Chemical mapping of a 177-nucleotide RNA with 2A3 and DMS.
High DMS reactivity at an A or C suggests that its Watson-Crick edge is free.
The RNA was probed in 150 mM KOAc, 10 mM MgCl2 and 150 mM bicine (pH 8.5) at 24 C.
The DMS profile rests on 2,221 reads.

[RMDB]
RNA sequence: GGGAACGACUCGAGUAGAGUCGAAAAGAACAUCUGGACCCCACUAGGCUGGCAGAAAUACUGAAAUUGUGCUGUGAGUCAUCUUUAAGGACCAGAGUUGGGACUAUAUUCUCGCCUAUUCCAGCACCGCUUUUGACUAAUUCGUUAGUCAAAAGCGAAAAGAAACAACAACAACAAC
Reactivity to 2A3 in 0.01 (KOAc 150mM, MgCl2 10mM, bicine 150mM(pH8.5), 24C), signal-to-noise 3, nucleotides 027 to 126: g030a010a000c010a180u030c000u040g030g020a110c010c020c010c000a040c020u050a040g030g010c010u040g090g000c000a000g050a080a220a050u210a100c060u110g100a050a140a210u190u110g020u060g010c020u020g040u070g090a020g020u030c020a090u020c100u050u190u110a060a080g050g000a030c010c000a000g030a010g060u090u120g000g000g020a000c060u070a050u030a080u300u060c030u040c020g000c020c010u080a120u040u030c040c010a050g010c050a050c060
Reactivity to DMS in 0.01 (KOAc 150mM, MgCl2 10mM, bicine 150mM(pH8.5), 24C), signal-to-noise 3, nucleotides 027 to 126: g000a120a090c080a090u000c020u000g030g020a150c040c010c010c030a050c150u000a060g010g000c030u010g000g000c050a040g000a030a070a080u000a110c100u000g010a090a080a120u010u000g040u000g010c010u020g020u000g000a050g030u000c040a080u020c050u010u000u000a110a220g000g000a060c010c010a030g010a070g010u000u010g010g010g010a090c140u000a080u010a100u000u000c030u000c080g000c060c040u000a170u000u000c020c010a070g000c080a090c130